[RMDB]
RNA sequence: GGGAACGACUCGAGUAGAGUCGAAAAUGCUGCUGCUGCUUUGAAGUGUGCUGGACAAAUCUCCCUUUCCUAGUAGCAACUUGUAUGGAAGGUGAAAUGACCUGUGGGAAAGCCCCACUGGGAAGCACUAUGGUUCAGGCUUCGGCCUGAACCAUAGAAAAGAAACAACAACAACAAC
Reactivity to DMS in 0.01 (KOAc 150mM, MgCl2 10mM, bicine 150mM(pH8.5), 24C), signal-to-noise 1, nucleotides 027 to 126: u040g000c020u000g000c040u000g020c000u010g000c000u030u030u000g000a020a000g020u000g000u000g000c080u000g030g030a150c110a020a090a070u030c080u000c020c000c120u000u000u000c000c000u000a090g040u020a030g050c230a130a060c040u010u000g000u040a060u000g000g020a020a130g020g000u000g000a040a020a120u000g030a130c040c020u000g010u000g020g000g000a240a070a260g060c240c010c010c000a000c000u000g000g030g000a240a040g000c030a070
Reactivity to 2A3 in 0.01 (KOAc 150mM, MgCl2 10mM, bicine 150mM(pH8.5), 24C), signal-to-noise 1, nucleotides 027 to 126: u110g000c030u000g000c000u000g000c000u000g000c000u090u150u150g030a010a010g020u000g000u000g030c060u020g050g000a070c050a060a020a130u030c050u150c040c000c000u000u070u000c000c000u010a010g000u000a020g090c000a050a170c030u100u040g040u190a150u250g010g000a040a030g010g040u030g050a170a010a030u060g010a040c000c000u000g010u000g010g020g050a020a140a080g020c020c000c060c010a030c070u070g010g040g000a050a000g080c000a000